[RMDB]
The data come from the RNA Mapping Database (RMDB), library OK1LIB. The record gives the reactivity of an RNA of 177 nucleotides to 2A3 and DMS. The reactions ran in a buffer of 150 mM KOAc, 10 mM MgCl2 and 150 mM bicine (pH 8.5), at 24 C. For 2A3, 3,889 sequencing reads were counted.
RNA sequence: GGGAACGACUCGAGUAGAGUCGAAAACAAUGAGCGAACAACCCCCGCCUGAGAAGGGAGAAGCAUCAAAGAGUUGUACGCGGUAUCAAUGAAAGGAUUUGAUCCCUGCACUCUGCGUGUCAGGAACCUAACGGGUCUGAUUCGUCAGACCCGUUAGAAAAGAAACAACAACAACAAC
Reactivity to 2A3 in 0.01 (KOAc 150mM, MgCl2 10mM, bicine 150mM(pH8.5), 24C), signal-to-noise 5, nucleotides 027 to 126: c070a030a190u200g030a030g050c040g050a050a040c040a070a080c070c010c000c000c010g050c020c050u120g040a090g050a090a110g050g030g010a070g010a040a000g010c020a040u140c040a050a060a030g030a000g030u140u180g010u080a060c200g020c070g060g020u170a010u040c010a000a010u030g100a180a060a080g270g050a050u020u000u050g000a010u020c000c000c010u020g000c010a010c010u010c020u030g030c020g020u040g000u020c010a010g050g020a010a020c000
Reactivity to DMS in 0.01 (KOAc 150mM, MgCl2 10mM, bicine 150mM(pH8.5), 24C), signal-to-noise 4, nucleotides 027 to 126: c060a100a080u050g000a120g000c040g020a080a040c080a140a210c070c020c000c040c050g010c000c040u000g010a090g010a080a030g000g000g010a070g000a080a170g000c050a040u060c050a100a290a020g010a020g010u000u010g010u000a020c180g070c170g000g000u030a030u010c010a020a020u030g010a110a120a120g000g030a060u020u000u000g000a030u000c020c000c000u010g010c030a010c010u000c000u000g010c290g010u000g000u020c040a090g020g000a110a060c170
2A3 adducts were read by reverse transcription with SuperScript II with manganese.